[RMDB]
RNA sequence: GGGAACGACUCGAGUAGAGUCGAAAAACUGGAUAUUCAAGGGUUUACGAGCAGAAAUGGUAUGAUUGCAAGGUUCGAAACUAAUUAAAUACCCUAGCGCUUAAAGACACUCACCUCCCGCAAAAACGUGUUACUUUAACUUCGGUUAAAGUAACACAAAAGAAACAACAACAACAAC
Reactivity to 2A3 in 0.01 (KOAc 150mM, MgCl2 10mM, bicine 150mM(pH8.5), 24C), signal-to-noise 1, nucleotides 027 to 126: a000c060u080g020g040a030u020a020u150u090c060a030a040g030g030g000u030u060u100a050c080g000a010g000c010a010g090a070a160a030u060g000g000u100a040u120g150a080u050u100g040c040a050a080g100g090u030u040c050g050a050a010a040c050u060a040a020u130u020a150a040a000u040a040c010c000c040u000a040g020c030g040c030u020u070a090a000a140g000a040c020a010c040u000c010a040c010c020u000c000c030c000g030c030a110a140a000a030a030c030
Reactivity to DMS in 0.01 (KOAc 150mM, MgCl2 10mM, bicine 150mM(pH8.5), 24C), signal-to-noise 1, nucleotides 027 to 126: a060c060u010g000g000a050u010a040u010u010c060a060a080g000g010g040u020u000u000a140c190g050a040g040c030a080g000a090a090a030u000g020g020u000a070u000g010a120u000u000g040c090a130a060g000g010u000u000c090g060a190a080a020c030u010a090a100u020u000a060a040a090u000a020c020c000c040u000a110g010c110g020c070u000u010a040a120a100g000a070c070a060c030u000c070a100c070c040u000c000c000c000g000c240a030a060a070a040a040c280
Source: RMDB library RFMREP, as collected in RNAgym. Structure probing data (2A3 and DMS) for a 177-nucleotide construct. DMS adducts were read by reverse transcription with MarathonRT. DMS (dimethyl sulfate) methylates the pairing face of unpaired adenines and cytosines. The reactions ran in a buffer of 150 mM KOAc, 10 mM MgCl2 and 150 mM bicine (pH 8.5), at 24 C.